[RMDB]
RNA sequence: GGGAACGACUCGAGUAGAGUCGAAAAAGGACAUGGCCUCAAGAUUUGCUGAUGGGCUCUGCUUAUUUUGGAACUGUAAUGUACCAAAAUAUCCUAAUAAUGCAAUUGUAUGCAGGUUUGACACACGACGGAUAGAACUUCGGUUCUAUCAAAAGAAACAACAACAACAAC
Reactivity to 2A3 in 0.01 (KOAc 150mM, MgCl2 10mM, bicine 150mM(pH8.5), 24C), signal-to-noise 9, nucleotides 027 to 129: a000g060g020a040c020a040u060g010g000c000c000u070c050a060a060g050a180u070u090u170g050c040u040g020a090u120g030g030g000c000u010c020u030g000c020u030u030a030u020u020u020u010g010g000a020a010c010u020g060u210a080a110u230g000u030a040c000c000a000a000a000a000u040a020u000c010c000u040a090a070u110a120a040u120g020c020a020a050u090u070g050u080a100u070g020c020a020g010g030u040u060u120g090a040c030a000c010a010c100g140a020c060g070
Reactivity to DMS in 0.01 (KOAc 150mM, MgCl2 10mM, bicine 150mM(pH8.5), 24C), signal-to-noise 9, nucleotides 027 to 129: a070g000g010a110c050a040u000g010g020c000c020u040c090a080a090g000a080u040u020u050g000c010u000g020a080u050g020g000g040c060u040c120u010g010c090u010u010a030u000u000u010u010g000g000a090a020c000u000g030u060a070a040u000g040u010a060c020c000a020a020a020a020u010a050u020c000c000u000a070a070u010a100a070u000g000c030a010a040u020u010g010u050a090u010g000c040a000g020g030u020u020u020g000a120c170a040c110a080c100g030a120c250g020
Chemical mapping of a 170-nucleotide RNA with 2A3 and DMS.